RNA sequence: GGGAACGACUCGAGUAGAGUCGAAAAGGACUGCCUUCGCACUGCAGUGGAACAACUGCGGCAGAAGGCCCUCAGCGCAUUUGGGUCUAAAGAGUCUGCCGAUGGAUUUGAAGCCACCGCGUGGGUGGACGCAGUCCACCUUCGGGUGGACUGCGUCAAAAGAAACAACAACAACAAC
Reactivity to 2A3 in 0.01 (KOAc 150mM, MgCl2 10mM, bicine 150mM(pH8.5), 24C), signal-to-noise 3, nucleotides 027 to 126: g080g040a060c070u090g020c030c020u040u000c040g000c050a060c090u160g010c010a040g000u040g010g020a110a030c010a010a000c010u020g010c000g000g000c010a030g010a040a030g000g020c000c000c000u020c020a070g030c090g030c120a060u060u060u090g030g000g000u000c010u030a140a180a040g130a030g180u020c020u010g010c000c000g160a240u100g000g050a060u000u100u150g050a090a030g000c000c010a010c020c000g030c000g030u030g030g020g050u060g040
Reactivity to DMS in 0.01 (KOAc 150mM, MgCl2 10mM, bicine 150mM(pH8.5), 24C), signal-to-noise 4, nucleotides 027 to 126: g000g010a170c090u010g000c000c010u000u010c040g010c050a140c100u000g050c050a040g000u000g010g010a120a150c100a050a060c020u000g000c000g010g020c030a080g000a070a040g010g000c000c010c010u000c140a090g010c240g000c200a100u010u000u000g010g020g010u010c010u000a080a100a170g000a160g020u000c000u000g010c000c010g000a060u000g000g010a120u000u000u010g010a150a170g000c010c010a000c010c030g010c060g020u010g000g000g030u000g000

Background: An RNA of 177 nucleotides, treated with 2A3 and DMS and read out base by base. DMS (dimethyl sulfate) methylates the pairing face of unpaired adenines and cytosines. Conditions: 150 mM KOAc, 10 mM MgCl2 and 150 mM bicine (pH 8.5), 24 C.